The record gives the reactivity of an RNA of 207 nucleotides to 2A3. It was measured as part of the RMDB library M2RFPK. Conditions: 150 mM KOAc, 10 mM MgCl2 and 150 mM bicine (pH 8.5), 24 C.
RNA sequence: GGGAACGACUCGAGUAGAGUCGAAAAGGGACGCCUUUAGAAGAAGAGGCUAGGUGGUAUUCCGGUGUGGGAUACUUGGUAAUAUGUAACGCUAAUGGCAUAAGAUUGUAGGACGGAAUUUACAGUCAAAACGGUCCUGCGUUCGCGCAGGACCGAAGUGUGACUUAAACUUCGGUUUAAGUCACACAAAAGAAACAACAACAACAAC
Reactivity to 2A3 in 0.01 (KOAc 150mM, MgCl2 10mM, bicine 150mM(pH8.5), 24C), signal-to-noise 3, nucleotides 027 to 156: g030g000g010a020c040g040c010c030u080u040u070a240g020a220a010g060a030a020g000a000g030g020c050u020a010g070g070u060g020g010u070a050u090u000c020c040g000g110u170g000u160g070g030g000a040u040a060c000u020u020g070g000u040a050a070u060a080u160g070u070a060a020c030g010c080u030a100a050u110g040g000c020a040u030a140a030g020a050u030u100g030u030a010g040g050a020c040g030g050a010a010u100u040u040a060c010a020g020u040c070a010a000a080a090c030g000g000u000c010c000u000g000c000g000u010u040c170g000c000g000c050a000g000g000a000c000c000g000a000a000